[RMDB]
RNA sequence: GGGAACGACUCGAGUAGAGUCGAAAAGAAGAGAAUAAAUAGAGGAGUCAGGGUUCGCACACGCUCCGCGAACCUACGGUAACACUGACUGUGGAGCGGAAAAGGCAGAUACACUACUGCCAAAGAACCUGACUAGUACGUUCGCGUACUAGUCAGGAAAAGAAACAACAACAACAAC
Reactivity to 2A3 in 0.01 (KOAc 150mM, MgCl2 10mM, bicine 150mM(pH8.5), 24C), signal-to-noise 3, nucleotides 027 to 126: g080a030a010g110a000g060a050a060u110a070a060a120u260a060g140a060g140g000a000g000u050c030a030g000g020g000u000u000c000g000c010a040c000a000c100g000c000u020c020c010g030c000g010a010a020c000c020u030a050c020g060g060u040a050a020c040a030c150u040g050a010c000u020g080u110g080g000a000g030c030g010g000a090a170a000a000g020g010c010a010g000a020u120a090c060a030c110u130a030c000u030g000c000c000a030a000a000g030a030a000
Reactivity to DMS in 0.01 (KOAc 150mM, MgCl2 10mM, bicine 150mM(pH8.5), 24C), signal-to-noise 2, nucleotides 027 to 126: g000a110a040g000a140g000a090a000u030a050a050a080u000a100g010a170g000g000a130g000u020c000a090g000g010g000u000u010c020g000c030a050c230a130c090g000c000u010c020c000g010c000g000a020a010c010c020u000a030c080g000g080u030a100a120c180a230c100u040g010a020c000u040g020u000g010g000a020g020c000g000g000a040a160a060a200g000g010c000a010g000a110u020a030c170a010c170u030a040c000u000g010c010c000a000a010a040g000a030a060

An RNA of 177 nucleotides, treated with 2A3 and DMS and read out base by base. High 2A3 reactivity points to a flexible backbone, as in loops and unpaired stretches. Conditions: 150 mM KOAc, 10 mM MgCl2 and 150 mM bicine (pH 8.5), 24 C. 2A3 adducts were read by reverse transcription with SuperScript II with manganese. Source: RMDB library OK1LIB, as collected in RNAgym. The DMS profile rests on 1,861 reads.